This 177-nucleotide RNA was probed chemically with DMS. The data come from the RNA Mapping Database (RMDB), library TTRINS. The DMS profile rests on 1,397 reads.
RNA sequence: GGGAACGACUCGAGUAGAGUCGAAAAGAUAUGGAGAAUGAACUACUUUCCCGUAACAGCUAUGAAGCUGAAUUCUCGGAAACGAGAAUUCAGUGGAGCUGGAUAAGGGAAAGCAUUCUCCUAAGUCCUAUACUCGUGACUUCGGUCACGAGUAUAGAAAAGAAACAACAACAACAAC
Reactivity to DMS in 0.01 (KOAc 150mM, MgCl2 10mM, bicine 150mM(pH8.5), 24C), signal-to-noise 2, nucleotides 027 to 126: g000a140u010a220u010g000g020a060g000a020a000u000g020a090a030c120u040a300c000u000u000u000c000c000c020g010u010a180a300c010a000g000c000u000a190u020g010a150a300g000c000u010g010a010a000u000u000c000u000c010g000g000a100a100a190c010g010a020g000a010a000u000u000c000a000g010u000g000g020a000g050c000u010g000g000a040u000a100a120g000g000g000a000a000a000g000c010a010u000u000c010u000c000c000u020a000a110g020u000c020